Source: RMDB library OK1LIB, as collected in RNAgym.
Chemical mapping of a 177-nucleotide RNA with DMS and 2A3.
Conditions: 150 mM KOAc, 10 mM MgCl2 and 150 mM bicine (pH 8.5), 24 C.
RNA sequence: GGGAACGACUCGAGUAGAGUCGAAAAGAACUUUUGAAGGAGGAACUCUUGAUGGCUGAAUUACCUCAAUCAAGAAUAAAUGAACGAAAUAUUACCAGUGAAAUGCGUGAAUCAUUUUUAGAUUAUGAUCUCCAAAAGGGUUCGCCCUUUUGGAGAUAAAAGAAACAACAACAACAAC
Reactivity to DMS in 0.01 (KOAc 150mM, MgCl2 10mM, bicine 150mM(pH8.5), 24C), signal-to-noise 2, nucleotides 027 to 126: g000a110a190c050u010u000u000u000g000a070a100g020g000a030g000g000a150a150c080u020c010u000u000g000a040u020g010g060c070u000g020a080a060u010u020a080c090c010u000c060a040a040u010c040a050a000g000a030a080u020a040a030a050u060g030a050a120c100g000a060a090a110u030a080u010u000a130c090c000a050g000u070g000a060a040a040u010g000c060g010u030g000a070a070u030c030a030u000u040u010u060u010a100g000a020u010u010a090u040g010
Reactivity to 2A3 in 0.01 (KOAc 150mM, MgCl2 10mM, bicine 150mM(pH8.5), 24C), signal-to-noise 3, nucleotides 027 to 126: g000a000a040c080u100u140u090u210g030a070a060g030g020a010g020g020a000a110c030u000c020u040u070g010a000u060g030g080c040u150g040a030a060u160u100a290c030c020u040c000a050a080u010c020a040a040g090a110a040u130a170a100a040u120g040a040a050c060g070a110a070a000u210a150u190u070a130c020c020a040g070u110g170a060a010a060u230g000c030g000u020g110a040a060u030c010a000u000u020u030u110u190a050g040a040u000u000a040u220g100